[RMDB]
RNA sequence: GGGAACGACUCGAGUAGAGUCGAAAAGUUAUCAGGUGAUUGAGAUUGCCAUUCAGCGCCGCUUUAAGGGCAGGGGGAAACAGUAAUGCCGGUAAUUAACACGCAUCAGAAUAUCGCCGCCUUUCUCGACAUGCUGGCCGUGUCCGAAGGGACGGCACCUAACCACCCCUUUCGAGGGGUGGUUAGGAAAAGAAACAACAACAACAAC
Reactivity to 2A3 in 0.01 (KOAc 150mM, MgCl2 10mM, bicine 150mM(pH8.5), 24C), signal-to-noise 1, nucleotides 027 to 156: g020u050u030a050u190c110a080g000g020u000g030a110u110u040g000a040g000a060u150u040g080c110c050a050u170u000c000a050g090c030g070c040c020g060c110u110u110u120a030a030g030g030g000c000a040g040g000g000g000g000a090a000a000c060a030g000u130a050a060u100g030c060c000g000g010u020a120a000u090u110a050a040c060a060c070g020c030a040u180c020a020g110a100a100u130a060u300c060g000c000c020g000c000c000u050u010u000c060u010c020g000a000c000a060u060g130c070u060g110g120c190c000g010u000g010u020c000c020g050a050a050g000g000g000a050c000g000g000c000a010